[RMDB]
RNA sequence: GGGAACGACUCGAGUAGAGUCGAAAAGCCGGCAUGGCCCCAGCCUCCUCGCUGGCGCCGGCUGGGCAACGAUCCGAGGGGACUAUCCCUCUCGAGAAUCGGCAAAUGGGCCCCUCGCUCGUAUCUCUAACUUGUAAGUUCGCUUACAAGAAAAGAAACAACAACAACAAC
Reactivity to DMS in 0.01 (KOAc 150mM, MgCl2 10mM, bicine 150mM(pH8.5), 24C), signal-to-noise 8, nucleotides 027 to 129: g000c000c060g030g060c020a110u040g000g030c000c070c010c010a010g050c020c080u030c140c110u030c220g030c000u020g010g060c260g000c020c030g020g020c060u000g000g000g000c010a070a020c070g020a050u000c110c050g000a040g010g000g000g090a090c130u040a050u080c030c000c010u010c050u020c030g010a160g000a070a080u010c000g010g000c090a060a100a100u030g000g000g000c010c000c040c010u020c030g030c300u020c040g010u050a130u030c050u000c020u030a110a160
Reactivity to 2A3 in 0.01 (KOAc 150mM, MgCl2 10mM, bicine 150mM(pH8.5), 24C), signal-to-noise 9, nucleotides 027 to 129: g010c000c000g000g000c100a220u220g020g000c040c040c000c010a010g000c000c040u190c030c020u120c110g000c010u010g010g000c010g000c010c000g000g000c040u190g000g010g010c020a040a010c010g000a000u000c030c010g000a000g020g000g000g010a010c030u120a110u230c010c030c000u040c000u020c010g190a250g050a080a130u100c020g010g000c040a040a060a100u090g010g020g010c010c000c000c000u010c010g000c000u020c010g040u090a210u000c020u000c000u010a110a100
The record gives the reactivity of an RNA of 170 nucleotides to DMS and 2A3. The DMS profile rests on 38,500 reads. For 2A3, 46,800 sequencing reads were counted. The reactions ran in a buffer of 150 mM KOAc, 10 mM MgCl2 and 150 mM bicine (pH 8.5), at 24 C. Source: RMDB library 15KLIB, as collected in RNAgym. For DMS the reverse transcriptase was MarathonRT.